[RMDB]
The record gives the reactivity of an RNA of 177 nucleotides to DMS and 2A3. The data come from the RNA Mapping Database (RMDB), library TTRDEL. 2A3 adducts were read by reverse transcription with SuperScript II with manganese. The reactions ran in a buffer of 150 mM KOAc, 10 mM MgCl2 and 150 mM bicine (pH 8.5), at 24 C. Values cover nucleotides 27 to 126.
RNA sequence: GGGAACGACUCGAGUAGAGUCGAAAAGAUAUGGACCAAGCUCAACAGCCUUAAGGUUCGGAAACGAACCAAGGACAUGAGCGACGUCCUAAGUCAAAAUCCAACCGUACUUCGGUACGGUUGGAAACCUAUCAACGUAGUUCGCUACGUUGAUAGGAAAAGAAACAACAACAACAAC
Reactivity to DMS in 0.01 (KOAc 150mM, MgCl2 10mM, bicine 150mM(pH8.5), 24C), signal-to-noise 7, nucleotides 027 to 126: g000a020u000a300u010g000g000a010c000c020a080a300g010c000u000c000a040a080c240a190g000c000c000u000u000a150a080g020g010u000u000c010g010g000a060a060a120c000g010a000a000c000c010a040a020g000g010a050c110a180u000g000a010g000c000g000a230c300g000u000c000c000u010a020a080g010u000c030a090a040a090a140u010c000c000a000a010c000c000g010u000a000c000u000u010c200g030g010u000a000c000g000g000u000u000g000g000a000a020a070
Reactivity to 2A3 in 0.01 (KOAc 150mM, MgCl2 10mM, bicine 150mM(pH8.5), 24C), signal-to-noise 5, nucleotides 027 to 126: g010a000u040a010u060g000g000a000c000c020a070a010g000c000u020c010a130a300c110a300g070c010c000u140u090a280a170g010g000u010u000c000g000g010a030a040a010c000g000a010a000c010c020a000a010g020g000a090c090a300u140g000a000g000c020g000a010c020g000u000c000c000u000a050a000g020u000c020a010a020a020a280u000c000c000a000a010c000c010g010u000a000c010u030u080c230g090g000u000a000c000g020g000u000u000g000g000a000a000a000